[RMDB]
About this RNA:
This 177-nucleotide RNA was probed chemically with DMS and 2A3. For 2A3 the reverse transcriptase was SuperScript II with manganese. High 2A3 reactivity points to a flexible backbone, as in loops and unpaired stretches. Conditions: 150 mM KOAc, 10 mM MgCl2 and 150 mM bicine (pH 8.5), 24 C.
RNA sequence: GGGAACGACUCGAGUAGAGUCGAAAAGGAGUGGAUAAAGGUUGAAUUAGCUCUGAAAGACAUGAUUCUGGCUGACUAUGGUAAAAAGAACAACGUAAACGUUGCUUCUCUUACUCAAUCUGAAGUGCACUGAUCCAGUUUUCGAACUGGAUCAGUGAAAAGAAACAACAACAACAAC
Reactivity to DMS in 0.01 (KOAc 150mM, MgCl2 10mM, bicine 150mM(pH8.5), 24C), signal-to-noise 4, nucleotides 027 to 126: g000g010a090g030u000g000g020a090u010a070a150a070g000g020u000u000g010a100a060u000u000a070g000c060u000c060u010g020a060a060a080g010a100c160a090u000g000a130u010u000c030u000g020g000c040u000g000a050c040u000a060u000g020g000u010a000a020a050a070a020g010a040a040c000a000a010c000g020u010a070a120a140c080g000u000u000g010c130u000u000c010u000c250u000u000a010c010u000c070a040a030u000c020u000g000a070a080g000u010g000
Reactivity to 2A3 in 0.01 (KOAc 150mM, MgCl2 10mM, bicine 150mM(pH8.5), 24C), signal-to-noise 2, nucleotides 027 to 126: g100g000a010g010u080g060g010a090u140a110a180a050g050g020u040u020g030a020a090u120u010a060g000c030u000c020u090g020a030a050a020g090a020c060a080u170g000a090u150u030c020u030g040g000c020u010g010a040c020u060a060u150g060g000u030a070a130a000a020a000g030a000a000c020a000a000c010g110u160a290a000a070c040g020u010u020g000c050u000u000c050u020c010u000u040a030c020u010c040a090a090u020c060u120g090a110a030g080u050g150